[RMDB]
RNA sequence: GGGAACGACUCGAGUAGAGUCGAAAAAUUGUGAUGCUCUUGUAGUCCUUGGCCACUGACGGGCCUGCCGCGACAAGGACGCCGGUCACAAUUGCCGCAAGCGCAUUCAAGUUGAAAAAUUUCAUAAAUAUAUCAUGCUGUUCGCAGCAUGAUAUAUAAAAGAAACAACAACAACAAC
Reactivity to 2A3 in 0.01 (KOAc 150mM, MgCl2 10mM, bicine 150mM(pH8.5), 24C), signal-to-noise 3, nucleotides 027 to 126: a000u170u180g040u070g000a000u010g030c010u000c000u060u060g090u140a070g000u010c000c000u040u020g040g040c050c080a080c200u140g070a190c020g000g040g100c040c070u040g120c000c020g010c020g030a040c030a030a000g000g000a000c000g000c030c030g040g000u060c030a030c080a180a130u130u220g010c010c010g030c010a000a030g000c010g000c030a000u070u060c060a060a070g000u010u100g140a010a000a010a050a080u010u050u030c010a020u070a160a110
Reactivity to DMS in 0.01 (KOAc 150mM, MgCl2 10mM, bicine 150mM(pH8.5), 24C), signal-to-noise 2, nucleotides 027 to 126: a130u020u010g000u030g000a000u000g030c030u000c010u000u000g000u040a080g000u010c010c010u000u040g000g010c030c050a100c180u040g020a100c080g020g040g000c060c030u040g010c080c030g040c050g010a110c020a020a010g010g000a020c060g000c160c090g020g000u000c170a060c260a010a070u010u030g000c020c010g000c000a010a030g000c110g000c060a030u000u010c040a040a110g000u000u000g010a030a030a100a150a240u020u000u010c010a020u030a090a130
The data come from the RNA Mapping Database (RMDB), library OK1LIB. The record gives the reactivity of an RNA of 177 nucleotides to 2A3 and DMS. The RNA was probed in 150 mM KOAc, 10 mM MgCl2 and 150 mM bicine (pH 8.5) at 24 C. For 2A3 the reverse transcriptase was SuperScript II with manganese.